[RMDB]
RNA sequence: GGGAACGACUCGAGUAGAGUCGAAAACUUCGUCGCAAUGCGGAUGGCGGAGCUCAAUUUCUGUUCCAGGGUGUUGACGUUCUUCUCUCUACCAAUUUUCCUGCAGAGCUCGUCAACCUUGAGACGGGACGACGUGGUGAUUCGUCACCACGUCGUCAAAAGAAACAACAACAACAAC
Reactivity to 2A3 in 0.01 (KOAc 150mM, MgCl2 10mM, bicine 150mM(pH8.5), 24C), signal-to-noise 2, nucleotides 027 to 126: c020u040u000c010g010u000c030g010c070a100a190u220g070c130g010g220a230u120g070g000c060g080g010a000g000c010u000c160a140a210u150u010u090c050u110g060u050u090c050c060a040g010g000g000u090g050u080u140g010a000c030g000u050u020c010u160u030c020u010c010u070c020u060a220c010c040a100a010u070u050u300u090c060c010u080g030c120a000g030a020g040c050u040c010g000u010c000a010a010c040c000u030u030g020a020g000a050c000g000g030